[RMDB]
RNA sequence: GGGAACGACUCGAGUAGAGUCGAAAAGAAGAUAAAGCCGUAGCGGCAGCUGGAACCUUACUGAAAAACUCUUGUGCUGCAGCUGUAAAAAUCGAAGGAGCUGAACCUGAAGUCAUUUCAGUUAUUGCACUGGUAAUGCUUUCGAGCAUUACCAGUGAAAAGAAACAACAACAACAAC
Reactivity to DMS in 0.01 (KOAc 150mM, MgCl2 10mM, bicine 150mM(pH8.5), 24C), signal-to-noise 1, nucleotides 027 to 126: g030a110a090g010a080u010a040a140a110g010c020c070g030u010a010g000c060g020g000c020a030g020c060u000g000g010a080a090c070c060u000u000a080c120u030g000a030a070a090a200a080c050u000c010u010u000g000u010g000c020u000g000c020a030g010c010u000g030u020a010a080a030a080a060u010c110g000a130a120g000g000a100g000c010u000g000a030a090c040c060u000g000a040a030g010u010c140a070u010u000u000c040a020g010u000u000a060u000u000g000
Reactivity to 2A3 in 0.01 (KOAc 150mM, MgCl2 10mM, bicine 150mM(pH8.5), 24C), signal-to-noise 1, nucleotides 027 to 126: g040a020a000g020a060u060a100a190a030g000c010c020g040u090a040g060c080g050g000c010a000g050c010u050g000g050a040a100c000c020u020u050a110c120u100g070a030a060a100a110a060c020u110c010u070u120g080u090g050c020u030g000c000a000g000c010u000g040u080a000a110a110a020a040u100c110g040a090a010g000g020a040g000c010u020g070a010a030c010c030u060g030a050a030g050u150c050a030u050u070u040c020a000g060u040u030a200u150u240g040